RNA sequence: GGGAACGACUCGAGUAGAGUCGAAAACGCAUCAAUACCUCUCAACUUCGAAGCCGAGAAACUCAAUACAAAGGAGGCAUUGAAAUGGACACAACACUGGGUGUAUAAUCCGAAGGAGGUCUGCUGGAUCACGCUUACACUUCGGUGUAAGCGUGAUAAAAGAAACAACAACAACAAC
Reactivity to 2A3 in 0.01 (KOAc 150mM, MgCl2 10mM, bicine 150mM(pH8.5), 24C), signal-to-noise 1, nucleotides 027 to 126: c030g060c000a040u070c100a080a130u030a100c000c000u000c010u010c030a050a000c000u150u040c070g080a150a040g000c040c040g030a010g090a080a040a030c060u030c060a080a100u200a300c030a060a080a000g080g020a030g000g040c000a040u020u010g000a000a000a040u130g070g000a020c050a000c000a230a090c060a050c170u070g060g000g230u100g000u020a150u090a090a050u000c000c000g010a030a000g040g020a110g000g050u000c000u050g000c010u010g020g000
Reactivity to DMS in 0.01 (KOAc 150mM, MgCl2 10mM, bicine 150mM(pH8.5), 24C), signal-to-noise 1, nucleotides 027 to 126: c090g010c060a240u000c020a030a070u010a040c030c030u000c040u010c110a000a100c060u000u000c100g000a160a070g010c130c040g000a170g010a030a120a100c040u020c030a000a120u000a070c210a060a120a190g000g000a110g000g060c060a020u000u020g000a080a000a150u000g020g020a050c100a110c050a090a100c110a060c090u010g050g040g000u000g020u020a130u010a080a040u020c000c000g060a060a080g000g000a130g020g000u000c020u000g000c090u000g000g000
Structure probing data (2A3 and DMS) for a 177-nucleotide construct. 2A3 adducts were read by reverse transcription with SuperScript II with manganese. Reactivities are given for positions 27 through 126. DMS adducts were read by reverse transcription with MarathonRT. The reactions ran in a buffer of 150 mM KOAc, 10 mM MgCl2 and 150 mM bicine (pH 8.5), at 24 C. For 2A3, 678 sequencing reads were counted.